[RMDB]
RNA sequence: GGGAACGACUCGAGUAGAGUCGAAAAGAAGCAGUCCUUAUUGUGUGUGAUGUUUAGUCAUCGCACUGUUCCUACGGGCUGCCAACGUAGGGCCAAUGUGCCGAGAGGCACUAGAAGUACGGCUUAUUAUGACGCAUCGCCGUACCAAAGAUGCUGACCUAAUAUCGACGUUCGCGUCGAUAUUAGGAAAAGAAACAACAACAACAAC
Reactivity to 2A3 in 0.01 (KOAc 150mM, MgCl2 10mM, bicine 150mM(pH8.5), 24C), signal-to-noise 4, nucleotides 027 to 156: g180a070a000g000c000a000g020u050c000c020u130u130a190u250u210g080u050g000u000g020u030g060a040u020g050u050u160u170a270g110u160c000a000u000c000g050c000a000c000u010g020u030u070c000c010u030a050c020g000g000g000c010u020g010c020c020a090a000c040g120u100a030g020g010g060c040c030a170a130u120g070u130g020c000c000g000a010g010a010g010g000c000a000c020u010a020g000a080a010g040u010a010c000g000g000c010u040u020a090u070u110a120u110g190a020c080g000c110a040u070c030g010c000c000g040u010a010c000c000a060a110a000g050a050u070g010c010u030g010a020
Reactivity to DMS in 0.01 (KOAc 150mM, MgCl2 10mM, bicine 150mM(pH8.5), 24C), signal-to-noise 2, nucleotides 027 to 156: g010a110a050g030c030a040g010u010c020c010u000u000a140u000u020g030u000g040u000g080u000g020a030u000g020u010u000u000a180g050u010c010a030u000c020g010c010a000c010u000g020u000u000c040c020u000a150c170g000g000g000c000u000g020c000c060a060a040c090g000u000a080g010g040g010c060c060a180a100u000g000u000g000c020c010g020a160g000a300g000g000c000a020c000u000a070g000a250a050g030u020a000c000g010g010c000u020u000a090u010u000a080u020g020a170c090g000c050a150u000c170g000c010c000g020u000a010c010c040a100a110a160g000a120u010g000c000u040g030a300
Chemical mapping of a 207-nucleotide RNA with 2A3 and DMS. For 2A3, 1,809 sequencing reads were counted. For 2A3 the reverse transcriptase was SuperScript II with manganese. The DMS profile rests on 3,031 reads. DMS adducts were read by reverse transcription with MarathonRT.